[RMDB]
RNA sequence: GGGAACGACUCGAGUAGAGUCGAAAAGUGUGUGUUCGUUCCUUGAGCGACGCUGAAAGGUAUUGCGCCAGACAACCAAAAGUUGUGCUGUUGCGCGUUGUAGGUAUUAGUUAAGCCUUUAGCUAAUCACUGACAAUAAUUUCGAUUAUUGUCAGUGAAAAGAAACAACAACAACAAC
Reactivity to 2A3 in 0.01 (KOAc 150mM, MgCl2 10mM, bicine 150mM(pH8.5), 24C), signal-to-noise 8, nucleotides 027 to 126: g080u080g010u020g000u010g040u110u050c010g010u020u000c030c000u080u110g030a030g020c040g030a020c070g000c050u080g080a060a040a030g070g000u110a110u130u280g010c000g000c010c000a000g010a010c000a000a000c010c030a050a030a030a040g000u020u020g030u110g200c000u020g040u140u150g000c000g000c020g000u010u020g010u020a080g090g030u070a090u110u070a100g060u060u060a070a030g020c010c000u030u030u020a010g010c010u010a010a000u020
Reactivity to DMS in 0.01 (KOAc 150mM, MgCl2 10mM, bicine 150mM(pH8.5), 24C), signal-to-noise 7, nucleotides 027 to 126: g010u010g020u010g030u010g020u020u010c020g010u000u000c020c060u000u010g010a080g020c040g010a060c090g020c020u010g000a060a040a070g000g010u000a090u010u010g010c000g020c000c000a010g000a030c010a010a010c000c040a090a100a130a300g000u000u000g000u000g010c000u000g000u010u020g020c000g000c010g000u010u000g020u010a060g010g020u010a070u000u000a050g000u000u000a070a110g010c050c040u000u000u010a050g000c020u000a030a100u000
Source: RMDB libraries RFM100 and RFMREP, as collected in RNAgym. Chemical mapping of a 177-nucleotide RNA with 2A3 and DMS. 2A3 is a SHAPE reagent: it acylates the 2'-hydroxyl of flexible nucleotides of all four kinds. The reactions ran in a buffer of 150 mM KOAc, 10 mM MgCl2 and 150 mM bicine (pH 8.5), at 24 C.